An RNA of 177 nucleotides, treated with 2A3 and DMS and read out base by base. It was measured as part of the RMDB library OK2TRN. The RNA was probed in 150 mM KOAc, 10 mM MgCl2 and 150 mM bicine (pH 8.5) at 24 C. DMS adducts were read by reverse transcription with MarathonRT.
[RMDB]
RNA sequence: GGGAACGACUCGAGUAGAGUCGAAAACAUAGACAUGCAUGGAUCGAUCAUAGCACGUACGCGCUAGGCCAUGGCACGCACAUCUAGGACGUACAGUACGCUAGCGUACCAUGCUAGCAUGAUGAUCUCUGUCCGUAUAAUUCGUUAUACGGACAGAAAAAGAAACAACAACAACAAC
Reactivity to 2A3 in 0.01 (KOAc 150mM, MgCl2 10mM, bicine 150mM(pH8.5), 24C), signal-to-noise 8, nucleotides 027 to 126: c010a040u120a040g110a060c030a060u090g010c010a020u030g020g030a060u060c040g030a020u100c080a230u060a020g000c010a000c050g010u030a010c010g000c010g020c040u020a010g000g050c080c050a040u080g030g000c070a040c170g070c020a050c010a060u040c020u030a020g070g160a040c000g000u040a020c040a090g050u050a060c070g000c020u000a010g020c010g010u020a170c020c010a020u050g000c000u010a010g000c010a040u140g040a070u060g040a050u080c030
Reactivity to DMS in 0.01 (KOAc 150mM, MgCl2 10mM, bicine 150mM(pH8.5), 24C), signal-to-noise 9, nucleotides 027 to 126: c050a090u000a070g010a130c090a080u000g000c020a040u010g010g010a280u010c050g010a160u010c050a120u010a040g030c030a070c080g010u000a030c030g010c090g000c010u000a030g010g020c140c130a060u000g000g000c060a080c180g010c080a060c130a060u000c040u000a030g000g000a030c020g000u000a020c050a120g020u010a070c190g010c010u010a010g010c000g010u000a280c060c040a030u000g000c000u000a080g010c070a070u010g010a100u000g000a110u010c090